RNA sequence: GGGAACGACUCGAGUAGAGUCGAAAAGACGCCCCAAUCGCGCGAUGCAUGCGUCAACGCGGCAUCGAUCAAGCGCCGCGCGAGCCCGUUGCCGCGAUACGCAGGCGCAACGAACACACCCCAAAGAAUGCUAGCAUCAUUUCGAUGAUGCUAGCAUAAAAGAAACAACAACAACAAC
Reactivity to DMS in 0.01 (KOAc 150mM, MgCl2 10mM, bicine 150mM(pH8.5), 24C), signal-to-noise 2, nucleotides 027 to 126: g020a080c260g030c050c020c000c170a050a200u010c050g010c010g020c000g000a050u000g030c000a110u010g020c000g030u010c170a020a030c030g000c040g000g000c000a070u010c030g000a150u000c130a110a120g040c070g030c040c120g030c050g030c010g000a300g000c040c030c010g020u000u000g010c000c010g000c000g010a090u000a050c100g000c060a010g020g000c030g020c080a050a080c110g000a100a090c090a050c100a190c040c000c010c030a070a130a090g000a110
Reactivity to 2A3 in 0.01 (KOAc 150mM, MgCl2 10mM, bicine 150mM(pH8.5), 24C), signal-to-noise 1, nucleotides 027 to 126: g040a010c040g100c000c000c010c020a020a060u120c090g000c000g000c010g020a010u140g060c090a050u060g010c010g000u090c080a060a020c020g000c000g020g000c000a050u050c010g000a010u090c030a080a000g050c040g060c100c060g030c000g000c000g030a020g010c050c010c000g010u000u000g020c000c040g000c010g060a050u070a080c020g040c030a000g070g000c010g010c020a030a030c000g060a080a030c040a000c010a020c090c000c020c030a000a110a000g190a060